Structure probing data (DMS) for a 207-nucleotide construct. Values cover nucleotides 27 to 156.

RNA sequence: GGGAACGACUCGAGUAGAGUCGAAAAUGGGCCGUGUGCUUAACCAGGACAAGAUCCCCUUCUCUCCAACGUUGUUGCCAACUCAUGAUUCUCCUAACCUGUGCUUGGAGAGACGUGGACCCAGAGUAAAACGAAGGGUGCUUCGGCACCCUUCGAACAUGAGUCUGUAGUUCGCUACAGACUCAUGAAAAGAAACAACAACAACAAC
Reactivity to DMS in 0.01 (KOAc 150mM, MgCl2 10mM, bicine 150mM(pH8.5), 24C), signal-to-noise 1, nucleotides 027 to 156: u000g000g000g040c010c050g000u000g020u010g040c030u010u000a120a080c040c010a120g010g010a210c070a160a110g000a300u000c000c030c020c000u000u000c020u000c030u000c000c000a040a070c090g010u010u000g010u030u000g000c000c100a090a110c080u000c020a120u020g000a120u000u010c010u000c030c030u000a070a070c090c040u000g010u000g000c110u010u000g020g010a020g020a000g010a010c030g030u000g020g020a050c050c000c000a300g000a170g060u020a050a040a130a160c020g000a070a020g000g010g010u010g000c000u000u010c290g020g000c020a010c010c000c000u010u000c010g000a000a080